Structure probing data (2A3 and DMS) for a 177-nucleotide construct. It was measured as part of the RMDB library OK1LIB. 2A3 adducts were read by reverse transcription with SuperScript II with manganese. DMS (dimethyl sulfate) methylates the pairing face of unpaired adenines and cytosines. The RNA was probed in 150 mM KOAc, 10 mM MgCl2 and 150 mM bicine (pH 8.5) at 24 C.
[RMDB]
RNA sequence: GGGAACGACUCGAGUAGAGUCGAAAACGAUAUGCAUUGAUCGCAUGUACUCUAUUAAUGCGUAUUAGUAUGCUCGUAGAACGACAUAUUGUCAUGAAAAUGACAAUAGUACAUGCGACGAGCAUAAGGUAGUGGUUGAUUUCGAUCAACUACUACCAAAAGAAACAACAACAACAAC
Reactivity to 2A3 in 0.01 (KOAc 150mM, MgCl2 10mM, bicine 150mM(pH8.5), 24C), signal-to-noise 9, nucleotides 027 to 126: c020g020a050u020a000u040g120c180a180u000u070g070a180u090c010g000c010a000u020g010u020a020c020u010c010u020a020u050u080a160a070u150g060c050g040u080a030u040u030a040g060u010a010u020g040c050u010c020g010u020a030g030a150a030c040g050a000c010a010u020a000u000u010g010u000c010a010u030g100a090a100a060a020u010g000a000c000a000a000u010a020g010u020a010c000a010u020g000c000g000a000c000g000a000g000c000a000u000a020a010
Reactivity to DMS in 0.01 (KOAc 150mM, MgCl2 10mM, bicine 150mM(pH8.5), 24C), signal-to-noise 7, nucleotides 027 to 126: c050g010a130u010a010u000g000c000a090u010u010g000a100u000c020g000c010a020u000g010u000a030c060u010c050u010a020u010u020a050a050u030g010c070g020u020a040u000u020a070g010u010a010u000g010c060u000c150g010u000a050g000a060a240c190g010a090c100a080u000a000u000u000g000u000c000a000u000g000a100a060a110a020u000g000a000c000a000a000u000a010g020u000a020c030a040u000g000c010g000a010c010g020a030g000c000a000u000a050a090